[RMDB]
RNA sequence: GGGAACGACUCGAGUAGAGUCGAAAAGAUAUGGAAGCAUUGUAUAGUAGAUCUCGGUCGGAAACGACCGAAGAUAGAGUAUGUGCUUCCUAAGUCAAACAUGAAAGAGAGUUCGCUCUCUUUCAUGGUCACGAUUGAUGUUCGCAUCAAUCGUGACAAAAGAAACAACAACAACAAC
Reactivity to DMS in 0.01 (KOAc 150mM, MgCl2 10mM, bicine 150mM(pH8.5), 24C), signal-to-noise 2, nucleotides 027 to 126: g000a040u000a040u020g000g010a030a010g000c000a000u010u010g070u000a020u000a180g020u020a130g010a030u000c000u000c000g010g020u000c010g010g010a020a030a060c000g020a000c000c000g020a010a020g030a000u010a060g020a180g010u000a010u000g010u000g000c010u000u010c000c010u000a020a090g010u000c000a180a140a300c020a000u000g000a000a010a010g010a030g020a010g000u000u020c280g000c000u000c000u000c020u010u000u000c010a000u000g000
Reactivity to 2A3 in 0.01 (KOAc 150mM, MgCl2 10mM, bicine 150mM(pH8.5), 24C), signal-to-noise 3, nucleotides 027 to 126: g000a020u000a000u020g010g000a000a000g000c030a000u150u300g150u090a050u070a210g300u120a080g030a090u030c010u010c000g020g000u010c000g000g020a010a000a000c010g020a000c000c000g030a010a000g000a000u020a020g300a020g020u030a000u030g010u000g000c000u000u000c010c000u000a020a000g010u000c000a050a120a160c000a000u000g000a000a000a010g030a000g000a000g040u100u190c290g090c160u010c000u010c000u000u000u010c000a000u000g000
Overview:
Structure probing data (DMS and 2A3) for a 177-nucleotide construct. The RNA was probed in 150 mM KOAc, 10 mM MgCl2 and 150 mM bicine (pH 8.5) at 24 C. High 2A3 reactivity points to a flexible backbone, as in loops and unpaired stretches. DMS adducts were read by reverse transcription with MarathonRT.